[RMDB]
RNA sequence: GGGAACGACUCGAGUAGAGUCGAAAAGAUAUGGAGGGAGUACAACAGCCAUCGCUCGGAAACGAGCGAAUGGACAUGUAUCUCCUAAGUCAAAACGAACACCCGUCCUUCGGGACGGGUGUUCGAACAUCGAAUCUUAGUUCGCUAAGAUUCGAUGAAAAGAAACAACAACAACAAC
Reactivity to 2A3 in 0.01 (KOAc 150mM, MgCl2 10mM, bicine 150mM(pH8.5), 24C), signal-to-noise 1, nucleotides 027 to 126: g030a070u220a090u300g130g030a090g080g030g020a010g040u070a040c060a150a020c040a100g060c000c000a010u000c010g020c000u010c000g000g000a140a130a030c010g000a000g000c000g000a000a020u000g010g000a010c020a030u050g000u000a030u190c010u000c000c000u030a070a010g070u010c010a000a000a120a210c030g000a020a000c000a010c000c020c020g020u040c030c030u130u120c300g050g000g010a000c000g000g050g000u000g000u000u000c000g000a010a000
Reactivity to DMS in 0.01 (KOAc 150mM, MgCl2 10mM, bicine 150mM(pH8.5), 24C), signal-to-noise 3, nucleotides 027 to 126: g000a070u000a120u010g010g010a200g010g000g010a110g010u010a010c020a020a070c210a210g010c000c000a010u000c000g000c000u000c010g000g010a100a080a190c000g010a000g020c000g000a030a010u000g000g010a010c100a060u000g010u000a010u010c010u000c000c000u000a030a110g010u010c070a090a060a160a170c030g000a030a020c000a000c000c000c000g040u000c000c000u000u010c250g030g000g000a000c000g000g010g010u000g000u000u000c000g000a040a140